An RNA of 177 nucleotides, treated with DMS and 2A3 and read out base by base. The reactions ran in a buffer of 150 mM KOAc, 10 mM MgCl2 and 150 mM bicine (pH 8.5), at 24 C. For 2A3, 3,793 sequencing reads were counted. Reactivities are given for positions 27 through 126.
RNA sequence: GGGAACGACUCGAGUAGAGUCGAAAAGCUCGGAGACGAGCAAGGCUGACAAAACACUGUCCCAACCUCCACGUGGUGUCGGCUGGAUAAUGCUGCAUUAUGUUGCAUUUAUCAACUGGGAAGAAAAACCACCACUACGUUUCGACGUAGUGGUGGUAAAAGAAACAACAACAACAAC
Reactivity to DMS in 0.01 (KOAc 150mM, MgCl2 10mM, bicine 150mM(pH8.5), 24C), signal-to-noise 1, nucleotides 027 to 126: g010c020u000c000g000g030a160g020a120c000g010a000g000c010a060a070g020g020c000u000g040a060c020a180a060a080a160c110a110c040u020g000u020c020c020c000a190a130c090c000u010c000c170a130c030g000u000g000g040u000g000u000c020g000g000c010u000g000g000a040u010a010a040u000g020c000u000g010c000a230u070u000a040u070g060u000u000g030c010a000u010u020u010a030u000c050a050a000c110u010g000g000g000a090a090g000a100a060a000a000
Reactivity to 2A3 in 0.01 (KOAc 150mM, MgCl2 10mM, bicine 150mM(pH8.5), 24C), signal-to-noise 5, nucleotides 027 to 126: g000c020u000c000g000g040a120g040a080c000g010a000g000c000a010a020g010g000c000u000g000a010c020a010a090a070a020c110a040c030u080g060u030c020c000c000a020a060c010c040u030c040c030a120c130g060u090g010g000u040g000u020c000g020g010c000u010g030g000a000u000a030a010u030g020c020u040g000c010a090u140u140a170u300g050u020u020g000c000a000u040u050u110a060u030c020a020a020c040u040g030g020g000a090a060g080a040a050a000a000